This 177-nucleotide RNA was probed chemically with DMS and 2A3. For 2A3, 1,184 sequencing reads were counted. The data come from the RNA Mapping Database (RMDB), library OK2TRN. For 2A3 the reverse transcriptase was SuperScript II with manganese. DMS adducts were read by reverse transcription with MarathonRT. The RNA was probed in 150 mM KOAc, 10 mM MgCl2 and 150 mM bicine (pH 8.5) at 24 C.

RNA sequence: GGGAACGACUCGAGUAGAGUCGAAAAUGUUGUUUCUGAUUCAAUGACAACUUUCUUGUUACCAUUAGAUGCACGUACAUGAUUGAUAUCACCAGAAACAACAAGUUGACCUUUAUCUAAAAUACAAAGUUUCGAUAUACUUCGGUAUAUCGAAACUAAAAGAAACAACAACAACAAC
Reactivity to DMS in 0.01 (KOAc 150mM, MgCl2 10mM, bicine 150mM(pH8.5), 24C), signal-to-noise 2, nucleotides 027 to 126: u000g000u000u000g020u000u000u010c000u000g000a170u000u020c150a110a170u000g030a070c070a110a040c040u010u010u000c040u010u000g030u010u010a020c040c020a110u000u020a120g000a150u000g020c270a130c280g030u000a050c030a010u010g000a010u000u000g020a090u010a070u010c020a010c170c000a050g000a010a010a020c030a000a020c010a030a100g000u000u010g000a190c030c010u000u000u000a100u020c080u030a070a050a100a020u010a150c180a100a080
Reactivity to 2A3 in 0.01 (KOAc 150mM, MgCl2 10mM, bicine 150mM(pH8.5), 24C), signal-to-noise 2, nucleotides 027 to 126: u020g000u000u000g010u000u000u000c010u000g030a120u160u110c100a090a090u100g030a030c000a080a050c000u000u020u030c000u040u070g070u080u070a030c030c030a080u040u150a160g100a240u150g130c080a010c160g050u070a000c010a010u040g010a020u020u020g000a040u030a000u140c010a030c060c020a010g000a000a000a000c010a000a000c010a020a010g050u000u100g110a090c020c000u090u170u020a210u110c120u170a050a080a060a090u130a080c050a100a190